[RMDB]
RNA sequence: GGGAACGACUCGAGUAGAGUCGAAAAAAAAAAAGAUAUGGAACCUAACGAGCGUCGUCGUUUGACGACCUUCGGAAACGAAGGUCCGAGACGACGAACUACUCGGUGGUUCCUAAGUCAAAAAAAACACAUAGUGGAUGUUCGCAUCCACUAUGUGAAAAGAAACAACAACAACAAC
Reactivity to DMS in 0.01 (KOAc 150mM, MgCl2 10mM, bicine 150mM(pH8.5), 24C), signal-to-noise 3, nucleotides 027 to 126: a000a000a050a040a050a100a080g000a030u010a300u010g020g010a020a010c020c000u010a110a090c020g000a010g000c300g020u000c000g040u000c000g020u000u020u000g010a300c300g000a010c000c000u000u010c010g030g010a150a070a110c010g010a010a000g000g010u010c040c010g010a240g000a000c010g010a000c000g000a010a030c110u000a070c000u000c020g010g000u010g020g000u010u010c010c010u000a030a040g000u000c030a020a000a000a070a030a060a120a140
An RNA of 177 nucleotides, treated with DMS and read out base by base. The DMS profile rests on 1,699 reads. Conditions: 150 mM KOAc, 10 mM MgCl2 and 150 mM bicine (pH 8.5), 24 C. Source: RMDB library TTRDES, as collected in RNAgym. High DMS reactivity at an A or C suggests that its Watson-Crick edge is free.